[RMDB]
RNA sequence: GGGAACGACUCGAGUAGAGUCGAAAACAGGCUCCUUAUCCUGAGCUGCAUGUGGCUGGGUACGGUCAGGGGUAUGGGACUAGUAAGAGGCACGUGGACAUAAGGUCAGAGGGCCCAAAGAGAGGGAAACAGAGGGAACAGACAAACAAGCAGGAAACCAGUAGCACCUAUUCGUAGGUGCUACUGGAAAAGAAACAACAACAACAAC
Reactivity to 2A3 in 0.01 (KOAc 150mM, MgCl2 10mM, bicine 150mM(pH8.5), 24C), signal-to-noise 1, nucleotides 027 to 156: c040a020g040g000c020u020c020c030u060u120a140u220c000c000u070g020a050g040c040u000g050c050a090u070g020u050g120g000c030u050g020g000g000u070a040c050g030g020u040c040a030g040g000g000g000u080a130u110g030g000g000a000c000u010a000g050u030a080a000g010a040g070g000c020a000c010g000u050g000g020a000c000a070u080a020a100g000g030u020c030a020g000a100g040g010g000c020c000c030a010a020a010g020a000g000a020g010g000g050a060a020a000c040a030g020a090g030g000g040a040a010c010a010g070a000c020a010a210a000c030a030a000g000c000a030g070g040a030a040a020